[RMDB]
RNA sequence: GGGAACGACUCGAGUAGAGUCGAAAAAAAGAUAUGGAGGAAUGGGAGAUUUGAGACCCGUUGAAAGAGAAUCGGAAACGAUUCUCUGGAGGGUCACAAAUCAUCGAUCAUUCCUCCUAAGUCAAAACUAACUACGAAACUUCGGUUUCGUAGUUAGAAAAGAAACAACAACAACAAC
Reactivity to DMS in 0.01 (KOAc 150mM, MgCl2 10mM, bicine 150mM(pH8.5), 24C), signal-to-noise 1, nucleotides 027 to 126: a130a140a120g000a010u000a300u010g010g010a020g010g030a000a000u020g000g000g010a190g010a050u000u010u000g000a060g020a010c000c010c010g000u030u040g000a200a110a010g010a030g000a000a000u020c000g000g030a090a010a090c000g000a000u000u000c000u000c000u000g040g000a030g040g010g010u000c000a070c000a000a000a010u000c080a060u000c120g000a150u010c010a000u010u000c000c000u010c000c020u010a030a060g000u020c050a140a060a140a200
This 177-nucleotide RNA was probed chemically with DMS. The data come from the RNA Mapping Database (RMDB), library TTRDES. The RNA was probed in 150 mM KOAc, 10 mM MgCl2 and 150 mM bicine (pH 8.5) at 24 C. DMS adducts were read by reverse transcription with MarathonRT.